An RNA of 207 nucleotides, treated with 2A3 and read out base by base.
The RNA was probed in 150 mM KOAc, 10 mM MgCl2 and 150 mM bicine (pH 8.5) at 24 C.
As a SHAPE reagent, 2A3 marks flexible, mostly unpaired nucleotides at the ribose 2'-OH.

[RMDB]
RNA sequence: GGGAACGACUCGAGUAGAGUCGAAAAAGACGAGGACUACGGUCCUCGGCAACAACCGUCACAACGGCUUCCUGGCGUGACGGGGUUAACCCCAACGGAGCAAGUGCGAGCUUACGAGCUCGCACAAUUUAGGAGAAUUCCUUCGGGAAUUCUCCAACAUAAAACGGUACUUCGGUACCGUUUUAUGAAAAGAAACAACAACAACAAC
Reactivity to 2A3 in 0.01 (KOAc 150mM, MgCl2 10mM, bicine 150mM(pH8.5), 24C), signal-to-noise 1, nucleotides 027 to 156: a030g040a000c010g000a000g000g000a010c050u040a020c170g030g000u030c000c000u000c000g010g010c000a020a040c000a010a020c000c010g010u000c000a020c010a020a100c080g060g000c030u250u130c030c010u060g030g010c000g000u000g000a000c010g000g000g000g000u180u100a050a050c030c020c000c000a040a100c130g030g000a020g020c070a170a100g050u000g000c010g000a000g000c020u040u060a080c180g130a010g000c000u000c000g000c000a020c000a010a010u040u060u140a010g000g020a000g000a000a000u000u010c000c000u030u090c250g090g000g010a000a000u000u000c000u010c000c000a010a000